The record gives the reactivity of an RNA of 207 nucleotides to DMS and 2A3. The DMS profile rests on 3,067 reads. Conditions: 150 mM KOAc, 10 mM MgCl2 and 150 mM bicine (pH 8.5), 24 C. For 2A3, 3,548 sequencing reads were counted. 2A3 adducts were read by reverse transcription with SuperScript II with manganese. DMS adducts were read by reverse transcription with MarathonRT.

RNA sequence: GGGAACGACUCGAGUAGAGUCGAAAAUUCUUCUGGUCAGUCUCUGGAAGGGGUGAAAGAGUGAGAAAUAGUAGCCAGCAAGUGUAGAAAGAGAUGUGGAAGAGAGAACGGGGAAACAGAAAUUGCAUUUCUCCCACGUUCCAAAUGUAGGUUAUCAGUAUAAAUGAGGAUUCGUCCUCAUUUAUACAAAAGAAACAACAACAACAAC
Reactivity to DMS in 0.01 (KOAc 150mM, MgCl2 10mM, bicine 150mM(pH8.5), 24C), signal-to-noise 3, nucleotides 027 to 156: u000u000c020u000u010c030u030g020g030u010c030a140g030u000c070u000c060u020g000g020a110a090g040g020g020g000u010g010a100a050a060g010a080g020u000g010a120g020a110a060a100u000a090g040u000a100g020c040c080a070g040c080a020a030g030u000g060u010a060g000a100a070a090g010a080g030a050u010g030u000g000g020a060a060g020a230g010a110g020a020a050c050g020g020g020g000a080a080a150c110a090g000a040a040a140u010u000g030c000a300u000u010u000c020u000c010c010c020a060c030g000u000u010c010c020a050a060a050u000g020u000a090g010g020u000u000a060u000c030a240
Reactivity to 2A3 in 0.01 (KOAc 150mM, MgCl2 10mM, bicine 150mM(pH8.5), 24C), signal-to-noise 5, nucleotides 027 to 156: u060u020c010u030u010c000u020g040g020u040c040a040g050u030c050u000c010u110g030g030a050a030g030g020g000g000u030g030a090a050a020g060a020g050u100g010a050g080a040a090a020u100a030g070u030a020g030c030c030a010g010c050a080a040g070u100g030u140a060g050a060a100a000g030a010g010a020u090g030u070g060g030a050a020g040a000g010a020g000a060a000c010g000g000g000g000a020a110a000c040a010g070a030a080a030u110u150g040c060a040u030u050u000c040u030c010c010c020a280c040g010u010u010c010c010a040a050a050u110g030u050a070g120g020u040u060a120u190c030a020